[RMDB]
RNA sequence: GGGAACGACUCGAGUAGAGUCGAAAAAGCCGACCGUCUUCACGAAGUCUCUUGGAAUAGAGCGUGAUACAGGGUGACAACCCCGUACUGAAGACCAGUACGCUGUGCGGUAGUGCCAGAGUAGCGGGGGUUGGAUAUCCCUCGCGAAUAACGCAGGGUGUGAUCGAAGCUUCGGCUUCGAUCACACAAAAGAAACAACAACAACAAC
Reactivity to 2A3 in 0.01 (KOAc 150mM, MgCl2 10mM, bicine 150mM(pH8.5), 24C), signal-to-noise 1, nucleotides 027 to 156: a030g030c010c000g010a020c010c000g030u000c040u000u000c000a040c040g060a090a100g070u080c010u010c010u050u040g060g050a000a020u060a100g010a040g000c020g000u000g000a000u050a170c080a060g000g000g040u020g040a000c010a000a020c000c020c000c000g000u000a020c030u010g010a120a000g000a050c100c030a000g000u010a000c020g000c020u020g050u140g040c020g040g060u170a080g080u030g080c020c020a040g020a030g030u020a000g000c040g060g000g000g000g040u000u070g110g010a060u140a050u300c000c000c000u000c000g000c010g000a000a000u060a050a020c070g000c030a020g080g040